Chemical mapping of a 177-nucleotide RNA with DMS and 2A3.
2A3 adducts were read by reverse transcription with SuperScript II with manganese.
It was measured as part of the RMDB library OK2TRN.
The RNA was probed in 150 mM KOAc, 10 mM MgCl2 and 150 mM bicine (pH 8.5) at 24 C.

RNA sequence: GGGAACGACUCGAGUAGAGUCGAAAAAGACUGGCAACGAGGGCUCCGCCCAGUCCGAGCAAGGCGCCCCGGUAGAGCAAAGGUCGAGCCACAUAGGCAUUGGUGCCGCCAAUCAGCUUGAUCACGCCCCACUAGUGAUUUUCGAAUCACUAGUGGGAAAAGAAACAACAACAACAAC
Reactivity to DMS in 0.01 (KOAc 150mM, MgCl2 10mM, bicine 150mM(pH8.5), 24C), signal-to-noise 3, nucleotides 027 to 126: a090g010a060c010u010g010g010c050a090a090c080g000a120g000g010g000c010u010c080c010g000c090c010c010a080g000u000c050c040g000a170g010c100a070a090g000g060c120g010c040c010c020c050g020g000u000a050g000a100g000c040a070a150a060g010g010u010c040g010a050g000c010c030a070c210a080u010a110g000g010c030a080u000u000g010g020u000g020c110c140g000c030c050a070a080u000c150a140g000c030u000u000g000a050u010c030a120c220g030c210
Reactivity to 2A3 in 0.01 (KOAc 150mM, MgCl2 10mM, bicine 150mM(pH8.5), 24C), signal-to-noise 2, nucleotides 027 to 126: a020g040a010c020u020g010g000c020a050a030c080g020a090g010g010g040c000u040c050c050g040c000c000c010a020g050u010c010c020g040a040g050c030a060a070g110g000c030g060c020c000c010c020g070g080u150a090g010a040g070c090a160a070a060g020g000u020c020g000a000g000c020c000a050c010a120u160a080g010g010c040a030u050u180g060g030u120g090c050c040g000c000c010a020a040u100c040a010g020c000u030u020g020a020u070c010a000c100g050c010